Structure probing data (2A3 and DMS) for a 177-nucleotide construct.
The reactions ran in a buffer of 150 mM KOAc, 10 mM MgCl2 and 150 mM bicine (pH 8.5), at 24 C.
For 2A3 the reverse transcriptase was SuperScript II with manganese.
High 2A3 reactivity points to a flexible backbone, as in loops and unpaired stretches.
The data come from the RNA Mapping Database (RMDB), library 15KREP.
RNA sequence: GGGAACGACUCGAGUAGAGUCGAAAAUACUGUCUGAUGACGGUGUCGUUUGCUAUAAUAGUGAUUAUGCAGCUAAGGGUUACAUUGCUGGAAUACAGAAUUUUAAGGAAACGCUGUAUUAUCAGAAGUUAUGUAGUUCGUUCGCGAACUACAUAACAAAAGAAACAACAACAACAAC
Reactivity to 2A3 in 0.01 (KOAc 150mM, MgCl2 10mM, bicine 150mM(pH8.5), 24C), signal-to-noise 2, nucleotides 027 to 126: u060a020c010u000g030u030c010u150g260a180u220g000a060c020g000g000u010g000u030c040g000u020u120u090g140c020u060a070u040a250a120u100a110g080u030g000a030u030u070a010u040g000c000a000g010c020u050a020a050g080g020g000u030u040a060c050a150u070u160g010c000u000g020g100a020a040u140a120c000a000g010a040a040u050u080u060u130a130a040g060g010a040a050a000c000g000c000u000g000u030a020u020u010a070u050c010a010g040a100a010
Reactivity to DMS in 0.01 (KOAc 150mM, MgCl2 10mM, bicine 150mM(pH8.5), 24C), signal-to-noise 2, nucleotides 027 to 126: u000a030c030u000g000u000c000u000g030a130u000g000a000c020g000g030u000g000u010c070g010u000u000u000g010c020u000a060u010a050a050u010a130g010u010g010a170u000u000a030u000g040c000a060g020c050u000a120a100g000g010g000u000u000a070c260a070u000u030g000c020u000g000g020a090a040u010a040c000a040g000a080a030u000u000u010u000a100a160g010g020a110a040a070c300g000c010u000g000u000a020u000u000a050u000c000a020g000a110a140